[RMDB]
RNA sequence: GGGAACGACUCGAGUAGAGUCGAAAACUGCCGCCGGGACGCAGUGAUCCUCGCAGGGACGCACGGUCGCCUCGGGUCGGCCUCGUGUCGGCUCGACCUGCGAGGGGAGCGAGUGGCGAGCCCGACCAAAACUUUCUCGCCUUCGGGCGAGAAAGAACACUGCAUGUUCGUUCGCGAACAUGCAGUGAAAAGAAACAACAACAACAAC
Reactivity to 2A3 in 0.01 (KOAc 150mM, MgCl2 10mM, bicine 150mM(pH8.5), 24C), signal-to-noise 1, nucleotides 027 to 156: c000u020g020c020c000g060c000c000g040g110g130a100c000g010c000a150g290u000g020a000u000c000c000u000c020g040c000a000g000g000g090a050c080g060c070a050c040g110g020u020c020g020c030c020u000c000g010g000g000u010c000g000g050c000c040u120c080g300u300g040u020c000g000g050c020u000c020g030a090c000c000u000g000c000g020a000g000g000g010g000a000g000c000g000a090g200u140g000g000c000g010a070g000c010c020c000g000a000c000c000a000a070a000a070c010u020u000u000c010u000c010g000c000c060u060u070c230g070g000g000c010g000a000g000a000a000a000g000a000a000
The record gives the reactivity of an RNA of 207 nucleotides to 2A3. For 2A3, 635 sequencing reads were counted.